[RMDB]
RNA sequence: GGGAACGACUCGAGUAGAGUCGAAAAUCUUUCUCCGCAAUGCCUAUGUGUACACUUCACAAGGGUUUGUGGUGGUCAAUGGCAAAGUUUCUACACUUGUCAAACAAGUGUUAGACUUGCUUAAUAACACACAUAGCCUCUUCGGAGGCUAUGUGUGAAAAGAAACAACAACAACAAC
Reactivity to DMS in 0.01 (KOAc 150mM, MgCl2 10mM, bicine 150mM(pH8.5), 24C), signal-to-noise 1, nucleotides 027 to 126: u000c050u000u000u000c040u020c000c010g000c010a040a000u000g030c010c020u000a200u020g020u020g080u000a090c140a100c290u000u010c000a010c020a030a300g010g000g000u000u000u010g070u000g000g010u000g020g000u000c180a050a050u040g010g000c000a010a020a010g010u020u020u000c020u020a040c000a010c000u010u000g000u000c300a090a180a300c010a000a000g020u000g000u000u030a000g000a020c000u000u000g000c000u000u000a070a100u010a070a100
Description
Structure probing data (DMS) for a 177-nucleotide construct. The data come from the RNA Mapping Database (RMDB), library 15KREP.